[RMDB]
Chemical mapping of a 177-nucleotide RNA with 2A3 and DMS.

RNA sequence: GGGAACGACUCGAGUAGAGUCGAAAAUUCUUCAAUUUUUGCAGGUAACUCAGAAAGCGUUUCUUGAGCUUCCCGGGGAUGAGCGUCUGGGAGAGCUGAUUCUGCAGACCGGCUAGGAGCCGCAGGGGAUAAGGCCUUAAUUCGUUAAGGCCUUAUCAAAAGAAACAACAACAACAAC
Reactivity to 2A3 in 0.01 (KOAc 150mM, MgCl2 10mM, bicine 150mM(pH8.5), 24C), signal-to-noise 2, nucleotides 027 to 126: u020u000c010u170u120c010a110a120u050u180u110u110u050g030c000a010g010g010u060a040a050c010u010c060a020g110a060a060a020g060c050g010u030u060u000c020u110u080g040a040g020c010u000u020c040c000c000g020g040g000g010a100u140g040a010g070c040g090u010c010u000g010g000g000a210g030a000g010c030u060g020a090u050u070c030u040g000c000a020g040a140c020c030g010g020c040u130a080g100g130a020g070c000c000g040c050a030g060g030g000
Reactivity to DMS in 0.01 (KOAc 150mM, MgCl2 10mM, bicine 150mM(pH8.5), 24C), signal-to-noise 2, nucleotides 027 to 126: u020u000c050u000u010c110a100a080u000u000u010u010u000g000c050a070g000g000u000a060a080c060u010c030a060g010a050a090a090g000c080g000u000u000u000c030u010u000g000a090g010c040u000u000c020c010c020g010g000g000g000a070u000g000a080g010c130g000u000c010u000g000g000g000a080g010a040g020c040u010g010a110u010u000c020u000g030c020a000g000a150c230c050g000g000c050u010a110g000g000a150g030c030c020g000c090a050g010g010g010
Source information: For 2A3 the reverse transcriptase was SuperScript II with manganese. Reactivities are rounded to 0.1 and cut off at 0 and 3. For DMS, 1,602 sequencing reads were counted. Conditions: 150 mM KOAc, 10 mM MgCl2 and 150 mM bicine (pH 8.5), 24 C.